[RMDB]
RNA sequence: GGGAACGACUCGAGUAGAGUCGAAAAACCAGCUGGGCAUUUACGGUAACUACAACGUGAUCGAUUGGGCGAUUGCCGACGGCCUCGGCGAGUUCUUCUGGCAGCACGAUUGGGGUUCUCAAGGCCGCAUCCACCCACGGACCACUAUUCAUCAAAACUUUUACGAUGGUUUCGACCAUCGUAAAAGAAAAGAAACAACAACAACAAC
Reactivity to 2A3 in 0.01 (KOAc 150mM, MgCl2 10mM, bicine 150mM(pH8.5), 24C), signal-to-noise 2, nucleotides 027 to 156: a010c010c000a000g030c050u080g000g010g020c040a130u070u090u170a080c020g030g020u010a050a060c040u070a010c050a150a030c050g060u110g080a080u040c050g090a130u030u150g050g000g000c060g080a080u030u170g030c000c000g040a100c040g020g020c010c030u060c060g020g000c020g000a010g030u070u030c000u080u040c020u010g100g040c030a050g000c040a060c090g010a040u040u030g000g000g000g000u080u000c050u030c030a030a030g020g000c000c000g000c020a050u030c030c020a020c030c020c000a020c030g020g040a030c020c000a070c030u170a160u210u130c040a030u080c090a060a190a170a180
This 207-nucleotide RNA was probed chemically with 2A3. Source: RMDB library OK3TST, as collected in RNAgym. Reactivities are given for positions 27 through 156. The reactions ran in a buffer of 150 mM KOAc, 10 mM MgCl2 and 150 mM bicine (pH 8.5), at 24 C.